Conditions: 150 mM KOAc, 10 mM MgCl2 and 150 mM bicine (pH 8.5), 24 C. This 170-nucleotide RNA was probed chemically with 2A3 and DMS. For 2A3, 47,003 sequencing reads were counted. It was measured as part of the RMDB library 15KLIB. The DMS profile rests on 74,850 reads. For DMS the reverse transcriptase was MarathonRT.
RNA sequence: GGGAACGACUCGAGUAGAGUCGAAAAGAUGUGGGGCAUCAUAUACAGCUAAUGAUGUCGAAGUCCAAUCAUCUGGCAUGAUUAAGCCAAAUGCUCUUCUUUGUGCUACUUGCCCCUUUGCUAAGGGAUAUCAUAGCGUUCGCGCUAUGAAAAAGAAACAACAACAACAAC
Reactivity to 2A3 in 0.01 (KOAc 150mM, MgCl2 10mM, bicine 150mM(pH8.5), 24C), signal-to-noise 9, nucleotides 027 to 129: g030a010u020g020u040g030g050g010g010c000a000u000c000a000u090a020u040a080c100a020g040c060u120a110a020u020g010a000u000g000u020c020g030a060a020g080u020c020c010a010a070u110c000a010u000c030u020g020g000c010a020u010g020a150u180u130a060a020g020c010c000a030a050a050u160g020c050u030c000u160u030c010u020u080u060g070u090g020c010u030a060c040u040u090g020c000c000c000c000u020u040u090g040c050u080a040a040g040g000g010a020u030a020
Reactivity to DMS in 0.01 (KOAc 150mM, MgCl2 10mM, bicine 150mM(pH8.5), 24C), signal-to-noise 9, nucleotides 027 to 129: g000a020u030g030u030g000g000g000g000c020a020u000c020a010u040a100u040a110c190a030g000c110u020a100a020u010g000a030u020g010u000c010g020a140a120g020u050c080c040a070a070u030c000a030u030c020u000g030g010c030a050u030g000a080u010u000a050a090g010c150c060a050a060a050u050g010c040u020c040u030u030c040u010u000u010g010u070g000c030u000a060c060u000u050g000c050c020c010c010u000u000u000g000c090u030a100a060g000g000g010a070u000a060